[RMDB]
Source information: Conditions: 150 mM KOAc, 10 mM MgCl2 and 150 mM bicine (pH 8.5), 24 C. Chemical mapping of a 177-nucleotide RNA with 2A3 and DMS. For DMS, 1,199 sequencing reads were counted.
RNA sequence: GGGAACGACUCGAGUAGAGUCGAAAAAGCAUAUGGAUAAAUAUUGGUGUACCACGUCGGCAUUAAUACCGCAACCCUCGGCACCAAAGGGUAUGUACGAAUUGCGAAACAUCAUAAGAUUAAAUGACUAAAAUAGCUGGUUCGCCAGCUAUUUUAGAAAAGAAACAACAACAACAAC
Reactivity to 2A3 in 0.01 (KOAc 150mM, MgCl2 10mM, bicine 150mM(pH8.5), 24C), signal-to-noise 1, nucleotides 027 to 126: a050g130c100a120u300a130u200g000g130a080u180a260a140a010u170a140u100u040g060g000u010g010u000a040c040c040a020c080g070u060c050g100g000c010a020u000u200a130a000u040a200c050c050g070c000a120a000c000c050c000u000c080g080g000c130a000c060c000a020a080a040g050g000g030u080a080u040g010u010a060c010g010a030a100u040u100g010c000g000a070a050a020c010a000u030c000a010u050a080a110g020a120u000u170a060a140a090u070g000a000
Reactivity to DMS in 0.01 (KOAc 150mM, MgCl2 10mM, bicine 150mM(pH8.5), 24C), signal-to-noise 2, nucleotides 027 to 126: a050g040c030a040u010a080u000g000g010a110u010a070a090a030u010a110u010u000g010g010u000g010u000a050c050c050a020c100g000u010c010g010g010c010a020u000u000a040a090u010a070c040c030g010c090a070a100c000c010c010u010c040g010g000c180a050c070c100a040a020a040g000g000g000u000a000u000g010u010a100c130g030a050a050u020u000g010c010g010a100a030a060c110a040u000c040a060u000a070a110g010a060u020u010a030a070a090u000g020a270